[RMDB]
RNA sequence: GGGAACGACUCGAGUAGAGUCGAAAAGAUAUGGAGAAGACUAUAUGAACCCUCCCUUACAACAGCGUCUAUUCGGAAACGAAUAGGACGACAUGUAACCAGGGUUCAUAUAGUCUUCUCCUAAGUCGUAUUUAUGCCUGUUCGCAGGCAUAAAUACAAAAGAAACAACAACAACAAC
Reactivity to DMS in 0.01 (KOAc 150mM, MgCl2 10mM, bicine 150mM(pH8.5), 24C), signal-to-noise 1, nucleotides 027 to 126: g020a070u010a300u020g030g000a020g000a030a010g010a020c000u010a010u010a000u000g010a020a000c000c000c000u000c130c120c170u000u000a000c000a070a090c280a230g010c020g000u010c020u000a070u000u010c010g040g000a130a170a250c010g000a030a000u000a040g010g000a010c000g010a030c100a120u010g000u000a010a000c100c220a010g000g030g000u000u010c000a010u020a000u000a000g030u000c040u000u000c000u000c000c000u000a000a040g020u010c040

The data come from the RNA Mapping Database (RMDB), library TTRINS. Structure probing data (DMS) for a 177-nucleotide construct. The RNA was probed in 150 mM KOAc, 10 mM MgCl2 and 150 mM bicine (pH 8.5) at 24 C. For DMS, 1,148 sequencing reads were counted. For DMS the reverse transcriptase was MarathonRT.